[RMDB]
RNA sequence: GGGAACGACUCGAGUAGAGUCGAAAAAAAGAUAUGGAUCUAGGGAGGUAUACACGGCCAGCGACUACUCGGAAACGAGUAGAGAACGCUGGAACUACCGUGUGCGAACCUAGAUCCUAAGUCAAAAGUCCUAGACUAGGUUCGCCUAGUCUAGGACAAAAGAAACAACAACAACAAC
Reactivity to DMS in 0.01 (KOAc 150mM, MgCl2 10mM, bicine 150mM(pH8.5), 24C), signal-to-noise 1, nucleotides 027 to 126: a100a090a030g010a060u020a300u000g000g000a020u000c000u000a000g000g010g010a160g050g000u020a060u000a050c000a010c040g000g010c040c000a020g020c000g050a270c000u000a000c000u000c010g000g000a190a200a160c010g000a070g000u050a000g000a150g010a120a050c030g000c010u000g010g000a000a000c140u030a230c000c000g000u000g000u000g000c090g020a030a170c000c000u010a020g000a030u010c000c000u000a000a060g000u000c050a060a030a130a060
Structure probing data (DMS) for a 177-nucleotide construct. Reactivities are given for positions 27 through 126.